[RMDB]
Structure probing data (DMS and 2A3) for a 207-nucleotide construct. It was measured as part of the RMDB library VIROID. The reactions ran in a buffer of 150 mM KOAc, 10 mM MgCl2 and 150 mM bicine (pH 8.5), at 24 C.
RNA sequence: GGGAACGACUCGAGUAGAGUCGAAAACGAGGAUAUCUUCCCUUCCUCCCCUCCGGCUUUUCCUCGAUUCGGAUUGGCUCAUCCUCGACGAGGGCGACGGUCCUCAGUUCUCUCUAUUCUUUCCUUUUGAAAGAGGAGACUGCUGGUCCAAACGCCCCUAUACGAAUAACUUCGGUUAUUCGUAUAGAAAAGAAACAACAACAACAAC
Reactivity to DMS in 0.01 (KOAc 150mM, MgCl2 10mM, bicine 150mM(pH8.5), 24C), signal-to-noise 2, nucleotides 027 to 156: c070g000a080g040g020a110u010a060u000c050u000u000c020c020c050u010u000c030c020u010c000c020c010c010u020c020c000g010g000c040u000u000u010u000c050c000u000c040g000a260u000u010c210g020g030a090u000u000g010g020c030u000c070a140u000c030c010u000c030g000a150c070g000a110g010g010g030c080g030a180c160g010g010u000c020c020u000c020a080g020u000u010c020u000c020u010c050u000a170u000u000c000u000u000u020c020c220u000u000u000u000g010a020a000a030g000a220g000g000a060g000a060c030u000g030c080u010g030g060u000c000c020a060a160a160c030g010c000c010c040
Reactivity to 2A3 in 0.01 (KOAc 150mM, MgCl2 10mM, bicine 150mM(pH8.5), 24C), signal-to-noise 4, nucleotides 027 to 156: c040g010a010g010g010a040u040a090u180c140u040u040c010c000c020u030u010c010c030u000c010c000c010c000u010c010c010g030g000c020u040u050u050u040c010c030u060c070g100a120u170u080c080g020g030a030u030u050g020g010c020u010c040a110u070c020c050u060c060g060a100c050g040a090g000g000g000c000g000a020c070g030g000u010c010c000u010c000a110g020u300u030c010u000c000u000c020u060a290u200u020c020u030u020u040c060c070u170u250u190u300g020a010a000a000g010a010g010g010a010g000a000c000u010g010c030u030g000g020u010c010c000a060a150a100c010g000c000c000c000